An RNA of 207 nucleotides, treated with 2A3 and DMS and read out base by base.
The reactions ran in a buffer of 150 mM KOAc, 10 mM MgCl2 and 150 mM bicine (pH 8.5), at 24 C.

[RMDB]
RNA sequence: GGGAACGACUCGAGUAGAGUCGAAAAAUGCAUACACAUUCUCUGAGCAAGUGGGUAUCUGGGCAGACAGUGUGGACAGCCUGAGUGGAAGACCAGCUCUGAGCCAAGGCAGAUGUGACACUUUUGUGUGACUAAAGCCUGAGCGGGAAGCUGAGCAAUCUUAACUUCCAUUCGUGGAAGUUAAGAUAAAAGAAACAACAACAACAAC
Reactivity to 2A3 in 0.01 (KOAc 150mM, MgCl2 10mM, bicine 150mM(pH8.5), 24C), signal-to-noise 6, nucleotides 027 to 156: a000u100g010c040a060u060a160c030a000c010a080u090u030c050u010c040u090g040a040g050c060a120a080g030u060g030g030g020u060a050u090c100u070g030g040g000c010a020g020a090c030a040g040u040g010u050g100g050a040c030a020g050c010c020u050g020a030g020u050g020g040a090a030g020a090c020c000a020g010c010u000c030u070g060a040g000c000c010a020a010g000g000c000a010g010a130u130g020u030g040a010c000a000c020u120u210u300u300g000u000g000u010g040a020c010u060a130a030a020g000c000c000u010g010a010g010c010g030g000g010a060a030g010c010u020g040a010g060c020a030
Reactivity to DMS in 0.01 (KOAc 150mM, MgCl2 10mM, bicine 150mM(pH8.5), 24C), signal-to-noise 4, nucleotides 027 to 156: a090u000g020c050a180u000a090c110a070c050a060u010u000c030u000c020u010g000a130g000c050a090a080g010u010g010g020g020u000a040u000c030u020g020g020g010c020a090g000a030c050a060g010u000g050u010g030g020a090c070a130g010c030c030u000g020a080g040u000g010g000a100a110g000a090c030c010a070g010c010u000c010u000g010a300g000c000c030a080a040g030g020c010a050g000a300u010g010u000g000a040c020a030c000u000u000u000u010g050u000g020u010g000a070c010u000a110a230a260g010c010c010u010g000a090g010c010g020g000g010a040a040g020c020u000g000a070g010c060a090
About this RNA:
For DMS, 8,552 sequencing reads were counted. It was measured as part of the RMDB library OK3TST.